Chemical mapping of a 207-nucleotide RNA with 2A3 and DMS.

RNA sequence: GGGAACGACUCGAGUAGAGUCGAAAAUGCCCUAGUUCGCUAGGGCAAAUGCGUACUACGUCACUGCGAAGAACAUGUACUCCCCACCGUAUCCCAAAUAGGAUACGAGGUACAUGGGAGCAGGACGUAUCGCUCGUGAGCCACGUUCGCGUGGCUCGAUCCUUAAGUGUUUCGACACUUAAGGAUCAAAAGAAACAACAACAACAAC
Reactivity to 2A3 in 0.01 (KOAc 150mM, MgCl2 10mM, bicine 150mM(pH8.5), 24C), signal-to-noise 7, nucleotides 027 to 156: u100g000c010c000c010u010a020g000u060u080c300g020c160u000a000g000g000g000c030a030a020a010u140g000c010g020u020a070c040u010a000c010g000u000c040a080c300u010g000c020g240a300a050g010a070a000c000a010u000g000u000a000c020u110c030c040c000c000a000c010c000g000u000a000u020c010c020c040a130a270a110u240a080g000g000a000u000a000c000g040a020g000g010u000a000c000a000u000g000g010g000a000g000c000a000g000g010a000c000g010u010a020u050c020g010c020u040c070g240u200g020a000g000c000c000a020c020g020u090u100c230g010c000g110u020g020g000c000u000c010
Reactivity to DMS in 0.01 (KOAc 150mM, MgCl2 10mM, bicine 150mM(pH8.5), 24C), signal-to-noise 2, nucleotides 027 to 156: u010g000c010c000c000u000a000g060u010u010c300g070c000u000a000g020g020g000c010a000a020a040u000g010c000g020u000a120c060u000a000c000g000u000c010a140c000u000g000c000g020a160a180g020a130a150c030a010u000g000u000a030c020u000c210c080c030c040a300c260c020g000u000a020u000c010c000c000a060a200a300u010a090g020g000a030u000a010c010g000a090g010g000u000a000c020a020u000g000g010g010a250g000c000a020g010g020a030c000g010u000a020u000c020g030c000u010c030g000u000g020a000g010c000c020a020c030g000u000u000c280g040c040g040u000g010g000c010u000c000
For 2A3 the reverse transcriptase was SuperScript II with manganese. The data come from the RNA Mapping Database (RMDB), library RNAMAK. Values cover nucleotides 27 to 156. The reactions ran in a buffer of 150 mM KOAc, 10 mM MgCl2 and 150 mM bicine (pH 8.5), at 24 C.